[RMDB]
RNA sequence: GGGAACGACUCGAGUAGAGUCGAAAAGGUGUAUUUAGGUUUCAGUCAAAUCAACAUUCAUGCGUACAUGUCCACGCUGUUCGAGUCAUUUGAGGUUAUUCCAGCUGUAGAUAUGCAAGAUGGCGAUGUUGUUCAACUCGUACAGGGUGAACGGGGGUCUCUACAUAUCAUUCGUGAUAUGUAGAGAAAAAGAAACAACAACAACAAC
Reactivity to DMS in 0.01 (KOAc 150mM, MgCl2 10mM, bicine 150mM(pH8.5), 24C), signal-to-noise 3, nucleotides 027 to 156: g010g020u000g020u000a050u000u000u010a090g020g030u010u010u000c030a150g030u000c070a050a080a090u010c040a090a060c050a090u000u000c020a120u000g010c050g040u020a060c070a070u000g010u000c020c030a040c010g020c000u000g000u000u010c050g000a080g000u000c030a110u010u000u000g010a080g000g050u000u000a090u000u000c040c020a120g020c030u000g030u010a060g000a120u000a050u000g020c040a060a120g020a100u000g010g020c050g010a160u010g020u010u000g010u000u000c040a030a050c020u000c030g000u010a060c060a050g020g010g020u000g010a050a040c050g000g020g020g030g000
Reactivity to 2A3 in 0.01 (KOAc 150mM, MgCl2 10mM, bicine 150mM(pH8.5), 24C), signal-to-noise 8, nucleotides 027 to 156: g040g000u040g010u080a140u080u170u190a070g020g040u050u040u070c090a070g050u080c070a060a070a140u070c030a030a060c040a070u060u180c050a060u140g040c020g070u060a070c020a090u100g030u030c050c010a020c040g090c030u010g000u060u060c040g020a010g020u010c060a130u060u080u180g080a050g030g040u090u060a060u120u060c030c020a010g000c020u030g020u060a030g030a110u100a050u180g030c010a030a050g020a080u050g020g000c040g030a040u040g010u070u010g030u020u040c020a040a030c010u000c020g020u040a040c050a050g050g020g020u030g010a040a010c000g010g000g010g000g020
Chemical mapping of a 207-nucleotide RNA with DMS and 2A3. The 2A3 profile rests on 6,798 reads. The reactions ran in a buffer of 150 mM KOAc, 10 mM MgCl2 and 150 mM bicine (pH 8.5), at 24 C.